[RMDB]
RNA sequence: GGGAACGACUCGAGUAGAGUCGAAAACCGACUCAAUACGUCCUCGUCGUACAGAACGGUAACAUGUUUUCCGAACAUCCGCGCUUGGGUAUACGAGUAUACACCUUACCCAACCCUCGCCAACGGGAGUGCAUCCACGAGUUCGCUCGUGGAUGAAACGAGCCUUAUAGUUCGCUAUAAGGCUCGUAAAAGAAACAACAACAACAAC
Reactivity to 2A3 in 0.01 (KOAc 150mM, MgCl2 10mM, bicine 150mM(pH8.5), 24C), signal-to-noise 4, nucleotides 027 to 156: c030c010g030a040c030u010c050a050a100u090a150c030g080u040c020c010u030c030g030u010c020g020u050a040c030a090g070a180a080c020g030g010u110a090a030c040a170u140g030u030u040u080u050c020c020g000a040a020c010a070u050c020c000g030c010g020c050u030u030g020g000g030u040a050u030a070c090g010a030g080u060a030u040a080c100a110c030c040u040u060a030c000c000c000a010a050c010c000c000u030c030g060c040c040a060a060c030g020g010g020a050g070u060g010c010a000u000c010c000a010c010g000a000g020u070u090c190g070c120u000c000g000u000g000g000a000u000g000a010a000
Reactivity to DMS in 0.01 (KOAc 150mM, MgCl2 10mM, bicine 150mM(pH8.5), 24C), signal-to-noise 2, nucleotides 027 to 156: c090c010g000a060c040u000c060a080a130u020a070c010g030u000c010c000u000c030g040u000c100g010u000a130c070a050g010a060a080c050g020g000u000a070a070c050a110u000g010u000u000u020u000c010c000g000a090a130c040a080u000c020c020g030c030g010c060u010u000g010g030g050u010a070u020a050c100g010a120g010u000a080u000a120c110a120c080c020u000u000a030c000c000c000a040a040c010c000c020u020c090g020c060c000a090a110c040g020g010g000a100g040u000g010c020a020u000c000c010a030c010g010a030g020u000u010c300g000c010u000c020g050u000g040g000a000u030g000a010a100
Record summary
The record gives the reactivity of an RNA of 207 nucleotides to 2A3 and DMS. The RNA was probed in 150 mM KOAc, 10 mM MgCl2 and 150 mM bicine (pH 8.5) at 24 C. DMS adducts were read by reverse transcription with MarathonRT. The 2A3 profile rests on 3,346 reads. 2A3 adducts were read by reverse transcription with SuperScript II with manganese. Source: RMDB library M2RFPK, as collected in RNAgym.